[RMDB]
RNA sequence: GGGAACGACUCGAGUAGAGUCGAAAAGCGGAUGGAGCGUCACGUGAGGACUGUGAAGCACAAUGCGAUAUGUUCUGAUUAUAUGGCGAGUUUGCUUAAUGACAUGUUUUUAGCCGAACGGUGUCAACCAACAGUUAAGGUUCGCCUUAACUGUUGGAAAAGAAACAACAACAACAAC
Reactivity to DMS in 0.01 (KOAc 150mM, MgCl2 10mM, bicine 150mM(pH8.5), 24C), signal-to-noise 5, nucleotides 027 to 126: g020c090g010g000a100u000g000g010a090g010c050g010u000c030a050c110g020u010g010a110g000g010a050c040u010g010u010g020a090a110g010c040a050c130a080a090u010g010c040g010a070u000a040u000g000u000u000c080u000g010a110u010u010a060u010a040u000g010g000c020g020a120g000u010u010u000g010c050u000u000a060a090u000g010a030c030a030u000g010u000u000u000u000u000a150g000c160c130g000a020a020c050g010g030u000g010u000c030a070a230
Reactivity to 2A3 in 0.01 (KOAc 150mM, MgCl2 10mM, bicine 150mM(pH8.5), 24C), signal-to-noise 4, nucleotides 027 to 126: g010c020g030g030a040u090g040g020a070g050c020g020u020c020a040c080g060u060g070a050g030g020a010c010u070g040u040g150a060a010g020c040a030c040a090a160u210g000c010g020a030u020a020u160g060u020u060c040u020g060a070u070u160a110u030a050u150g040g000c020g040a050g060u020u090u080g060c010u050u080a100a060u230g010a010c000a010u040g030u000u020u000u010u080a020g000c000c010g020a010a010c030g040g020u010g000u020c030a050a070
Chemical mapping of a 177-nucleotide RNA with DMS and 2A3. Values cover nucleotides 27 to 126. 2A3 adducts were read by reverse transcription with SuperScript II with manganese. The DMS profile rests on 5,795 reads. 2A3 is a SHAPE reagent: it acylates the 2'-hydroxyl of flexible nucleotides of all four kinds. The reactions ran in a buffer of 150 mM KOAc, 10 mM MgCl2 and 150 mM bicine (pH 8.5), at 24 C.